[RMDB]
RNA sequence: GGGAACGACUCGAGUAGAGUCGAAAACAGGUCCGUCCUCUCGCUAAGCAAAAACCUGAGCAUCCCGCCAACGGGGAUAAUCGUUGGCUCCCGCACAGUGGGUCAACCGUGCUAAGCCUGUGAACGAGCGGAAAGUUACUAGUCAAUGCGGACAGCGCACAUUGCAUACGUUCGCGUAUGCAAUGUGAAAAGAAACAACAACAACAAC
Reactivity to DMS in 0.01 (KOAc 150mM, MgCl2 10mM, bicine 150mM(pH8.5), 24C), signal-to-noise 2, nucleotides 027 to 156: c030a130g010g020u000c030c020g010u000c020c000u010c010u010c050g020c030u010a150a120g010c040a050a090a090a100a050c050c020u000g000a080g040c030a150u000c010c000c000g010c020c040a030a020c020g010g020g030g020a200u000a050a060u000c030g030u000u010g000g000c010u000c000c010c020g000c030a050c090a070g010u020g000g010g020u000c060a030a070c000c040g020u000g010c050u000a090a120g000c030c020u000g020u000g010a090a060c050g020a040g010c010g030g000a070a050a110g010u000u000a070c030u000a140g020u000c080a090a120u010g020c020g010g000a090c040a090g020c080g040
Reactivity to 2A3 in 0.01 (KOAc 150mM, MgCl2 10mM, bicine 150mM(pH8.5), 24C), signal-to-noise 5, nucleotides 027 to 156: c030a020g000g070u050c020c020g060u080c010c020u030c010u030c020g010c060u120a070a060g000c070a060a070a070a040a050c010c010u030g010a010g030c010a050u040c010c010c000g030c030c010a060a020c020g010g020g010g010a030u150a050a060u170c010g000u000u000g000g000c000u020c000c010c010g010c010a080c030a100g040u100g020g020g000u040c030a010a030c050c020g000u000g000c010u030a040a030g030c000c020u050g020u050g060a070a030c030g000a020g020c020g010g010a030a060a020g060u070u090a080c050u060a050g050u060c070a070a060u130g020c000g040g010a030c040a030g030c050g000